An RNA of 207 nucleotides, treated with 2A3 and read out base by base. For 2A3 the reverse transcriptase was SuperScript II with manganese. For 2A3, 959 sequencing reads were counted.
[RMDB]
RNA sequence: GGGAACGACUCGAGUAGAGUCGAAAAUUACCGCCCAGGAUGGGGUGCAGCGUUCCUGCAAUAUCCAGGGCACCUAGGUGCAGCCUUGUAGUUUUAGUGGACUUUAGGCUAAAGAAUUUCACGAGCAAAAAUCUUUAAGGGUUCGCCCUUAAAGAAACUACCUUUCAAGGUUCGCCUUGAAAGGUAGAAAAGAAACAACAACAACAAC
Reactivity to 2A3 in 0.01 (KOAc 150mM, MgCl2 10mM, bicine 150mM(pH8.5), 24C), signal-to-noise 2, nucleotides 027 to 156: u070u020a020c020c070g010c020c000c010a000g020g000a010u050g000g030g000g190u050g000c010a000g010c020g040u100u120c000c010u000g000c010a010a040u020a010u110c010c020a020g010g010g010c030a090c020c020u100a080g130g000u060g090c070a020g040c010c020u060u050g110u150a060g020u050u000u000u140a050g000u090g080g000a000c000u060u040u040a030g030g000c010u040a080a070a000g050a020a030u060u180u240c060a060c030g050a070g110c080a040a090a110a080a210u040c000u000u010u010a010a000g000g000g000u030u070c130g060c020c000c010u000u000a000a010a010g000a000a000a000